Annotation
This 177-nucleotide RNA was probed chemically with 2A3 and DMS. For 2A3 the reverse transcriptase was SuperScript II with manganese.
RNA sequence: GGGAACGACUCGAGUAGAGUCGAAAAGAAAAGAAAAAGCAGUGAAAAAUUGCGAUAAGCGUCGAGAGAAGUGCUGUGAAGACUCUCAGCGUUUUAGAGGAUGAGACGCGAAACUCUAAAGAGAAAAGGCUAUGAUAUACUUCGGUAUAUCAUAGCCAAAAGAAACAACAACAACAAC
Reactivity to 2A3 in 0.01 (KOAc 150mM, MgCl2 10mM, bicine 150mM(pH8.5), 24C), signal-to-noise 3, nucleotides 027 to 126: g070a000a070a000a000g070a000a190a000a000a000g040c050a020g000u020g260a210a060a100a090a010u090u040g000c010g080a040u060a130a030g030c010g000u010c030g000a000g000a000g040a190a010g020u040g080c000u020g030u070g110a140a040g130a090c010u010c000u000c050a000g040c000g030u000u000u020u040a080g020a080g090g000a080u100g110a030g020a040c030g010c020g010a070a030a050c040u070c000u030a030a070a090g070a000g000a000a130a040a000
Reactivity to DMS in 0.01 (KOAc 150mM, MgCl2 10mM, bicine 150mM(pH8.5), 24C), signal-to-noise 2, nucleotides 027 to 126: g000a110a070a110a120g020a050a070a090a120a170g000c000a020g000u010g000a040a030a080a150a090u000u010g030c020g000a040u010a090a130g000c000g030u000c000g000a110g030a140g000a070a040g010u010g000c040u000g010u000g000a060a160g000a070c070u000c010u010c010a060g000c030g000u000u020u020u010a050g010a080g000g020a140u000g010a160g000a020c000g000c030g080a040a070a060c080u000c000u030a060a050a110g020a090g000a040a060a100a080

Source: RMDB library OK1LIB, as collected in RNAgym. The reactions ran in a buffer of 150 mM KOAc, 10 mM MgCl2 and 150 mM bicine (pH 8.5), at 24 C. For 2A3, 2,045 sequencing reads were counted. For DMS, 2,995 sequencing reads were counted.